Chemical mapping of a 177-nucleotide RNA with DMS. The data come from the RNA Mapping Database (RMDB), library OK2TRN. For DMS, 3,326 sequencing reads were counted.
RNA sequence: GGGAACGACUCGAGUAGAGUCGAAAAAUGUCGGAGUGCAGAGACCAGAUUGAGCAGUGCCUGUGUGCCCUGCCGUACUCCGACAGGCCGGUUGGCCUACAGGCCGCAAUCCGCGCACUGGAACACCGCAGAUACUAUGGUUCGCCAUAGUAUCUGCAAAAGAAACAACAACAACAAC
Reactivity to DMS in 0.01 (KOAc 150mM, MgCl2 10mM, bicine 150mM(pH8.5), 24C), signal-to-noise 4, nucleotides 027 to 126: a070u000g010u000c010g010g010a020g020u000g020c040a110g010a150g010a160c080c080a070g000a180u000u000g020a150g010c030a020g000u000g040c020c010u000g020u000g030u020g010c000c020c010u000g030c010c130g010u000a030c010u010c010c010g020a010c020a020g010g000c030c010g000g000u000u020g010g020c010c010u010a070c220a140g000g020c040c020g020c160a080a070u000c030c030g040c180g000c030a090c060u000g010g010a090a120c160a080c200c100